[RMDB]
RNA sequence: GGGAACGACUCGAGUAGAGUCGAAAACUAUGGAAAACACCAGAACCAGUGGGGUCUCUGAUCCACUUCACCCUUGUAGAAAACUAUGGAGAUGCUGUGGGAGAACAUAGGGAAAGUUAGCAAAUGCGAAUCAAAAGUUUUUCGAAACUUUUGAUUCAAAAGAAACAACAACAACAAC
Reactivity to 2A3 in 0.01 (KOAc 150mM, MgCl2 10mM, bicine 150mM(pH8.5), 24C), signal-to-noise 2, nucleotides 027 to 126: c000u000a090u080g020g010a060a120a000a110c020a080c070c040a020g030a080a060c060c010a110g080u060g050g200g010g000u010c060u000c030u160g060a060u020c000c010a000c000u050u060c000a030c010c050c030u040u070g090u040a060g070a150a210a020a010c040u050a070u120g030g020a100g000a030u040g080c020u030g010u010g000g100g000a080g030a020a030c010a020u120a000g040g000g020a040a020a080g100u080u150a000g050c010a020a000a210u180g070c060
Reactivity to DMS in 0.01 (KOAc 150mM, MgCl2 10mM, bicine 150mM(pH8.5), 24C), signal-to-noise 3, nucleotides 027 to 126: c040u000a060u010g010g010a120a080a080a110c090a060c120c040a050g000a080a070c060c050a150g020u020g020g000g000g000u000c060u010c100u000g000a090u010c010c030a050c040u000u000c040a080c040c030c030u000u010g040u000a060g010a140a060a080a090c050u010a020u000g000g010a060g000a070u000g010c050u000g010u000g010g020g000a080g000a070a050c050a050u000a050g000g000g000a040a080a070g000u010u010a060g010c070a050a050a040u000g020c260
Source information: An RNA of 177 nucleotides, treated with 2A3 and DMS and read out base by base. It was measured as part of the RMDB library OK2TST. Values are in units of 0.01, from 0 to 300, in steps of 10. For DMS the reverse transcriptase was MarathonRT.